RNA sequence: GGGAACGACUCGAGUAGAGUCGAAAAAGCUCCUGUUUCGACAGGAGCUGUGUGGCUGCCCUUUUGUGCUCGAUGUACAGUGCUUUCCUGCCGGAAAGGGCUUGAGAGCUUGAUUCGUCAAGCUCAAGCAAGUUGGUGGUUUCGACCACCAACUUGCAAAAGAAACAACAACAACAAC
Reactivity to DMS in 0.01 (KOAc 150mM, MgCl2 10mM, bicine 150mM(pH8.5), 24C), signal-to-noise 1, nucleotides 027 to 126: a020g010c010u000c000c000u000g010u000u010u000c140g020a020c000a020g000g000a010g020c000u000g000u010g050u000g010g000c030u020g010c020c020c020u000u010u000u000g010u000g010c020u010c170g020a120u020g050u000a030c090a070g010u000g000c090u000u000u000c000c000u000g020c080c050g010g000a040a060a030g000g000g010c010u000u000g010a110g000a010g010c000u000u000g000a050u000u020c190g020u000c000a010a010g000c000u010c010a040a070